[RMDB]
RNA sequence: GGGAACGACUCGAGUAGAGUCGAAAAACAGCUUCAAUUUGCUUUUCAUUACUCCUCUAUCCUUUUGUUUCCUAGCUUGAAAUGAUUCAAUAUUCUUUACAAACAGAUUCUAAUCACAGUUAGCACGUGCAGUACAAUCUCAUUAAACAGAUAAGCAAAAAUAAAUAUCGUUCGCGAUAUUUAUUUUAAAAGAAACAACAACAACAAC
Reactivity to 2A3 in 0.01 (KOAc 150mM, MgCl2 10mM, bicine 150mM(pH8.5), 24C), signal-to-noise 3, nucleotides 027 to 156: a000c010a010g020c010u110u080c060a110a180u140u110u150g000c000u030u050u070u090c080a070u070u130a090c040u030c030c000u000c040u040a070u110c060c000u080u060u050u050g050u040u040u060c000c000u010a040g020c030u040u020g050a070a070a090u070g020a080u100u050c050a090a040u070a110u180u060c050u080u180u150a090c080a070a130a030c040a030g060a090u060u030c010u130a040a020u080c040a010c020a110g020u060u040a010g000c040a020c090g030u030g030c010a010g010u010a010c020a040a040u020c020u000c060a070u090u180a100a090a050c040a020g090a050u140a070a030g050c020a020
Reactivity to DMS in 0.01 (KOAc 150mM, MgCl2 10mM, bicine 150mM(pH8.5), 24C), signal-to-noise 2, nucleotides 027 to 156: a070c040a120g000c160u030u000c090a050a180u000u000u000g040c020u000u000u000u000c040a150u010u000a110c060u000c050c000u000c030u000a050u000c000c020u010u010u000u000g000u000u000u020c030c000u000a160g040c070u000u000g010a120a080a090u010g000a140u000u000c010a060a070u010a110u000u000c060u000u010u000a300c050a100a110a090c040a070g000a110u010u000c030u000a060a070u000c040a050c090a100g030u010u010a040g030c070a070c040g020u000g020c040a120g010u000a060c040a060a070u000c010u000c040a100u010u010a060a070a130c040a040g010a070u010a030a080g020c050a020